The record gives the reactivity of an RNA of 177 nucleotides to DMS and 2A3.
The reactions ran in a buffer of 150 mM KOAc, 10 mM MgCl2 and 150 mM bicine (pH 8.5), at 24 C.
RNA sequence: GGGAACGACUCGAGUAGAGUCGAAAACUCGAAAGAGACAGGCAUAUCUUAGGCAGAUGAACAAGUCACGUCUGAAAAGCGAAAGCCCUAAGAUAUGCAGCUGUGAAGACUUGACGCAGAAAAUAAAAUAUGGCCUACGAUUCGUCGUAGGCCAUAUAAAAGAAACAACAACAACAAC
Reactivity to DMS in 0.01 (KOAc 150mM, MgCl2 10mM, bicine 150mM(pH8.5), 24C), signal-to-noise 2, nucleotides 027 to 126: c000u000c010g000a160a070a120g020a030g020a270c060a080g000g000c000a010u000a000u000c000u000u000a000g000g000c050a000g010a000u040g000a050a140c030a000a040g000u000c000a300c030g000u020c050u000g000a190a010a080a220g050c010g030a090a130a090g000c000c000c000u000a000a000g000a040u000a000u000g050c030a070g020c020u000g000u060g020a000a000g000a000c000u000u000g000a300c030g050c000a090g020a260a100a040a060u050a000a070a110
Reactivity to 2A3 in 0.01 (KOAc 150mM, MgCl2 10mM, bicine 150mM(pH8.5), 24C), signal-to-noise 2, nucleotides 027 to 126: c010u010c010g030a020a020a010g060a010g060a120c050a080g080g000c000a000u000a000u030c030u010u000a000g010g010c000a000g020a020u000g010a030a040c000a020a000g000u000c010a010c030g040u020c020u000g080a220a180a170a020g030c000g060a060a000a000g040c000c000c000u000a000a000g000a000u000a000u010g000c000a030g040c010u050g010u020g030a100a020g070a020c000u010u020g000a020c000g010c020a000g070a040a070a020a020u280a020a070a030

Reactivities are given for positions 27 through 126. The 2A3 profile rests on 1,324 reads.